[RMDB]
RNA sequence: GGGAACGACUCGAGUAGAGUCGAAAACGGAAAACAGUGAGUGGACGGAACAAAUCCCCUUCCCACCUCCCCACUGUCCACUCACUGUCUUCCUAAGAGGAAAUAUAAAUCGGGGGUGGGAAGGGGACGCAGCAGUAUGGUUCGCCAUACUGCUGCGAAAAGAAACAACAACAACAAC
Reactivity to 2A3 in 0.01 (KOAc 150mM, MgCl2 10mM, bicine 150mM(pH8.5), 24C), signal-to-noise 2, nucleotides 027 to 126: c030g000g000a000a000a000a000c000a000g010u030g000a010g000u000g000g000a000c000g040g030a150a000c030a040a120a090u070c000c000c000c000u000u020c000c000c010a010c000c000u010c050c010c000c040a070c060u010g010u000c000c000a000c010u000c010a000c000u000g000u000c000u000u000c000c000u020a100a000g060a020g180g130a030a130a000u300a060u040a040a180a090u300c190g010g010g000g000g000u000g000g010g000a000a000g000g000g000g010a000
An RNA of 177 nucleotides, treated with 2A3 and read out base by base. It was measured as part of the RMDB library OK1LIB.